[RMDB]
RNA sequence: GGGAACGACUCGAGUAGAGUCGAAAAAGAAUGAUGAGACGUGUUCCUCUCUCCUACAGACCUCCUGGGGAUGCUAUGUACACCUUACUGAUUUAAAAAUGCAACGAGGACUUCGGUCCUCGUUGCAGAUCACGUAGUGGUUCGCCACUACGUGAUCAAAAGAAACAACAACAACAAC
Reactivity to 2A3 in 0.01 (KOAc 150mM, MgCl2 10mM, bicine 150mM(pH8.5), 24C), signal-to-noise 2, nucleotides 027 to 126: a000g140a060a060u210g030a060u070g040a020g010a030c050g030u000g010u050u020c000c000u000c000u030c000u000c000c000u090a220c040a120g060a270c010c060u120c040c000u030g000g000g000g030a010u040g000c000u050a030u110g030u030a010c010a030c050c000u010u090a010c020u080g110a140u070u090u160a060a170a070a050a050u110g000c000a000a000c000g010a000g000g000a000c030u020u060c260g040g000u040c020c000u020c030g000u000u000g010c000a000
Reactivity to DMS in 0.01 (KOAc 150mM, MgCl2 10mM, bicine 150mM(pH8.5), 24C), signal-to-noise 1, nucleotides 027 to 126: a070g000a130a050u000g000a080u010g000a110g000a020c100g020u010g010u000u010c010c020u000c070u000c030u000c010c030u000a110c100a090g000a110c100c070u020c070c010u000g020g020g000g010a100u020g040c060u000a030u010g040u010a060c150a070c040c040u000u000a100c140u000g000a100u000u020u000a010a040a030a060a160u010g010c000a010a000c000g000a000g010g000a020c000u000u020c190g040g000u000c000c000u000c010g000u000u000g010c020a020